[RMDB]
RNA sequence: GGGAACGACUCGAGUAGAGUCGAAAAGUGGAUUUGUUCGCAAAUCCACAAAUCGCAACAAGCCUGGCUGGCAGCCUAACAACCGAGCUACGCGGCGUAGCAAAAGGUUACACUUCGGUGUAACCAACAAUAUUACCCCCUUCGGGGGGUAAUAUUGAAAAGAAACAACAACAACAAC
Reactivity to DMS in 0.01 (KOAc 150mM, MgCl2 10mM, bicine 150mM(pH8.5), 24C), signal-to-noise 3, nucleotides 027 to 126: g010u000g000g000a020u000u000u000g010u000u020c240g020c010a020a010a010u010c000c000a000c010a010a050a090u010c070g000c060a040a080c100a100a100g000c030c020u020g000g020c050u000g010g020c040a060g010c050c040u000a080a060c160a060a060c050c020g000a130g010c010u000a030c020g030c080g010g020c060g020u000a020g030c050a110a050a080a070g010g000u010u000a020c000a000c010u000u000c140g050g010u000g010u000a000a000c000c000a040a050
Reactivity to 2A3 in 0.01 (KOAc 150mM, MgCl2 10mM, bicine 150mM(pH8.5), 24C), signal-to-noise 2, nucleotides 027 to 126: g000u000g000g010a020u010u000u010g030u030u040c070g020c110a000a000a010u000c030c000a000c020a000a010a000u070c050g000c050a060a090c030a060a060g030c000c010u020g020g030c000u020g000g000c040a010g030c020c020u040a040a060c010a000a010c020c020g020a030g010c020u010a010c010g040c080g220g090c070g040u020a010g000c020a030a060a010a090g000g010u000u010a000c010a010c000u020u080c220g050g000u000g000u010a000a010c000c000a000a010